[RMDB]
RNA sequence: GGGAACGACUCGAGUAGAGUCGAAAAUAAUAUGCAUAUCGAGUUCCCAUGUAUUUUCGUAGCCCUGCGGCUGUAACAUAACAGCUUAGUAAGAAUGCUACCUAACGAUAGCUAGCCGCAGGAUUAAAUCAUCUAGGCCUUUCGAGGCCUAGAUGAUAAAAGAAACAACAACAACAAC
Reactivity to DMS in 0.01 (KOAc 150mM, MgCl2 10mM, bicine 150mM(pH8.5), 24C), signal-to-noise 1, nucleotides 027 to 126: u020a190a180u000a050u000g010c040a090u010a070u000c050g020a290g000u000u000c000c010c000a070u020g030u020a060u000u000u000u000c000g080u010a090g040c060c030c030u000g040c000g080g020c000u010g020u000a060a140c130a110u000a080a160c120a090g000c030u000u000a100g010u000a090a030g030a130a080u000g020c090u000a030c080c030u000a030a110c150g010a100u000a000g000c060u000a070g000c030c010g000c020a000g000g000a060u000u010a000a100
The data come from the RNA Mapping Database (RMDB), library M2PK90. This 177-nucleotide RNA was probed chemically with DMS. The reactions ran in a buffer of 150 mM KOAc, 10 mM MgCl2 and 150 mM bicine (pH 8.5), at 24 C. For DMS the reverse transcriptase was MarathonRT. For DMS, 608 sequencing reads were counted.